[RMDB]
RNA sequence: GGGAACGACUCGAGUAGAGUCGAAAAGCUCCCAGGUUCGCCUGGGAGCAAAUAAGAAGCGAGCAAAGGGUAAGGUAGGGAUGCUCGCUAACCCACCACCCAAAACCGACUAGUUCGCUAGUCGGAAUCAAUAUUGUGACUUCGGUCACAAUAUUGAAAAAGAAACAACAACAACAAC
Reactivity to 2A3 in 0.01 (KOAc 150mM, MgCl2 10mM, bicine 150mM(pH8.5), 24C), signal-to-noise 3, nucleotides 027 to 126: g010c000u000c000c010c010a000g040g020u020u040c230g020c090c000u000g010g000g000a000g000c000a010a000a000u000a010a010g110a040a010g010c010g020a010g020c020a090a100a210g110g040g030u150a090a040g100g110u090a060g060g040g050a040u040g010c000u000c020g000c010u030a030a020c000c000c020a010c010c010a050c010c020c000a050a050a010a110c000c000g010a010c000u010a010g020u040u050c260g010c140u010a000g020u000c010g000g010a000a020
Reactivity to DMS in 0.01 (KOAc 150mM, MgCl2 10mM, bicine 150mM(pH8.5), 24C), signal-to-noise 2, nucleotides 027 to 126: g020c010u000c000c000c000a000g010g000u000u000c200g030c000c020u000g030g030g010a020g010c000a000a030a020u000a060a100g000a100a070g040c000g000a010g010c010a070a130a140g000g000g000u000a060a100g010g000u010a090g000g000g000a130u000g000c000u000c010g040c020u000a030a070c000c000c000a180c150c100a090c040c010c020a080a040a090a150c010c000g000a000c000u000a000g000u010u020c180g020c020u000a010g000u000c000g010g010a020a010